Source: RMDB library M2PK50, as collected in RNAgym. The record gives the reactivity of an RNA of 177 nucleotides to 2A3 and DMS. Values cover nucleotides 27 to 126. The 2A3 profile rests on 1,565 reads. For 2A3 the reverse transcriptase was SuperScript II with manganese.
[RMDB]
RNA sequence: GGGAACGACUCGAGUAGAGUCGAAAAAAUGUUCUGUUCGCAGAACAUUAAGCUGGUGUCCCGACCAGGCAGGAUGUCAGUACACGAAGUGCCAGAUCGGGAAUGCCUCCGGCUUCGGCCGGAGGAACGUACGCAAUACCUUCGGGUAUUGCGUACGAAAAGAAACAACAACAACAAC
Reactivity to 2A3 in 0.01 (KOAc 150mM, MgCl2 10mM, bicine 150mM(pH8.5), 24C), signal-to-noise 1, nucleotides 027 to 126: a000a020u000g010u010u020c010u000g000u030u060c250g000c050a010g000a010a000c000a000u000u020a040a010g110c060u060g040g000u100g080u010c000c000c000g000a010c010c000a030g000g000c010a020g030g110a120u100g020u120c040a030g120u270a060c040a000c090g070a150a000g100u010g000c020c010a030g020a090u040c010g040g000g000a030a060u070g070c000c010u000c020c000g020g040c000u030u040c130g080g000c020c020g000g010a000g010g000a000a000
Reactivity to DMS in 0.01 (KOAc 150mM, MgCl2 10mM, bicine 150mM(pH8.5), 24C), signal-to-noise 1, nucleotides 027 to 126: a000a000u000g000u000u000c010u020g000u000u000c240g040c000a000g000a010a030c000a000u000u010a080a120g040c080u000g000g000u000g000u000c010c010c020g030a030c000c000a020g020g020c040a070g010g000a230u010g000u000c030a080g020u030a080c130a030c000g000a100a230g010u010g010c010c010a040g010a050u030c020g040g000g000a040a050u000g000c000c000u000c000c000g000g010c000u000u000c230g000g000c000c000g000g000a010g000g000a010a040